Chemical mapping of a 177-nucleotide RNA with 2A3. The reactions ran in a buffer of 150 mM KOAc, 10 mM MgCl2 and 150 mM bicine (pH 8.5), at 24 C. Values cover nucleotides 27 to 126.

[RMDB]
RNA sequence: GGGAACGACUCGAGUAGAGUCGAAAAAUUUAAGGGCCAGGACGGUCACCUUUGGGGUGGUGACAAGUGUGAUCACUUGGGUGGUGGCUGUGUUUGCGCUUCUCCCAGGAAUCUCGUUUACCAGAUCACCGAUGGGACCGUUCGCGGUCCCAUCGGUAAAAGAAACAACAACAACAAC
Reactivity to 2A3 in 0.01 (KOAc 150mM, MgCl2 10mM, bicine 150mM(pH8.5), 24C), signal-to-noise 1, nucleotides 027 to 126: a000u190u100u090a120a100g010g000g050c000c000a010g000g060a000c000g010g010u000c000a040c000c000u100u230u200g160g010g000g000u020g020g000u150g000a000c090a090a110g160u140g040u040g300a220u200c000a000c000u000u000g050g050g050u050g000g040u000g000g000c100u000g000u010g060u000u090u000g000c150g000c000u020u010c090u000c000c000c040a000g040g000a010a100u140c050u020c060g090u000u000u070a060c060c060a000g000a090u160c120